[RMDB]
RNA sequence: GGGAACGACUCGAGUAGAGUCGAAAAGCUUGGGAGAGCCUGAAGGUUCCGAUCGAUCCGGUGCGGGCGGCUUGGGAGAGCCUUCCUCACGGAUCCUCAAGGGGAGAACCACCGAUGGAGAACACCCUUUCCCUAUCCACUUCGGUGGAUAGGGAAAAAAAGAAACAACAACAACAAC
Reactivity to DMS in 0.01 (KOAc 150mM, MgCl2 10mM, bicine 150mM(pH8.5), 24C), signal-to-noise 2, nucleotides 027 to 126: g050c010u040u000g020g030g000a150g000a000g050c030c000u000g010a230a070g010g000u000u030c000c040g030a200u080c170g000a000u000c010c010g000g040u010g010c270g010g020g000c300g000g000c020u000u010g000g120g020a110g000a010g010c010c000u000u000c050c000u000c000a000c030g010g020a000u000c010c020u020c100a060a060g000g010g000g050a120g000a090a110c000c000a040c090c000g000a180u010g000g000a050g000a070a070c160a110c010c020c010
Reactivity to 2A3 in 0.01 (KOAc 150mM, MgCl2 10mM, bicine 150mM(pH8.5), 24C), signal-to-noise 2, nucleotides 027 to 126: g030c050u060u080g050g000g010a090g000a030g010c060c000u060g100a120a010g030g020u050u010c020c020g030a100u100c050g000a000u000c010c000g130g110u030g000c020g000g030g000c020g000g000c010u080u030g030g020g010a080g000a000g010c000c000u020u000c010c000u000c000a010c010g000g000a000u000c000c000u080c010a070a090g000g000g020g000a110g010a030a010c000c030a020c000c040g030a050u040g040g020a060g010a020a030c000a070c040c000c000